[RMDB]
RNA sequence: GGGAACGACUCGAGUAGAGUCGAAAACGGUUACGCCUUCUUUACCGUUAUCAAGGAAGGUACUCGGCCAUGCUAAGGGAAGCAUUAUUUCUUAGGCGCAUGUCGCCGCCAGCAUGGUGUGAGGGGAAAAAGUAUGCUGGGUUCGCCCAGCAUACAAGAAACGGGAUCUGUUCGCAGAUCCCGUUUCAAAAGAAACAACAACAACAAC
Reactivity to 2A3 in 0.01 (KOAc 150mM, MgCl2 10mM, bicine 150mM(pH8.5), 24C), signal-to-noise 2, nucleotides 027 to 156: c000g000g000u030u010a010c110g040c000c020u020u060c000u000u080u050a050c020c020g190u130u080a040u120c100a000a000g020g000a020a000g000g000u050a060c030u000c000g020g010c010c000a000u000g010c000u050a080a050g020g010g010a060a040g020c090a160u140u110a170u050u200u000c030u010u100a050g000g000c040g020c040a110u210g080u300c000g000c020c000g000c010c020a010g010c020a000u020g000g060u110g100u140g030a040g000g020g030g000a050a180a000a000a000g000u000a000u000g000c000u000g000g000g050u070u110c130g110c030c000c000a000g020c000a000u000a000c000a000a000